[RMDB]
RNA sequence: GGGAACGACUCGAGUAGAGUCGAAAACGUGAACAUCGCUCUGCUAAGUCCCGUCGUUCUUCCAGUCAGAGCGAGAUUGUAAGCAACCUUAUGCGCAAUGAAGACAUAGAGGGACUUCUUCAUUAAGAAUACCGGAGGGAUUCGUCCCUCCGGUAUUAAAAGAAACAACAACAACAAC
Reactivity to 2A3 in 0.01 (KOAc 150mM, MgCl2 10mM, bicine 150mM(pH8.5), 24C), signal-to-noise 4, nucleotides 027 to 126: c030g050u060g090a070a010c040a100u030c020g010c000u000c000u030g030c030u080a050a040g060u080c000c020c020g110u060c010g010u020u050c020u110u040c060c000a070g120u160c000a000g000a010g010c080g010a020g010a040u020u130g050u120a070a030g020c010a010a130c030c020u120u160a060u200g040c120g000c050a010a030u070g000a020a010g020a020c020a030u120a030g120a090g010g040g010a020c000u020u000c000u030u010c010a070u000u090a040a090g090
Reactivity to DMS in 0.01 (KOAc 150mM, MgCl2 10mM, bicine 150mM(pH8.5), 24C), signal-to-noise 5, nucleotides 027 to 126: c160g000u020g000a190a100c090a100u000c000g000c000u000c000u000g000c100u010a070a060g020u000c030c010c030g010u010c050g000u010u000c030u000u040c040c090a070g000u030c030a020g010a010g000c010g020a020g000a040u010u020g010u000a080a180g030c030a090a150c070c030u020u020a060u020g000c060g000c130a030a010u000g000a030a030g020a090c220a120u010a080g000a110g010g020g000a040c040u000u000c020u000u010c020a020u000u000a120a110g000
Background: Source: RMDB library OK1LIB, as collected in RNAgym. Structure probing data (2A3 and DMS) for a 177-nucleotide construct. The DMS profile rests on 10,068 reads. For 2A3, 2,954 sequencing reads were counted.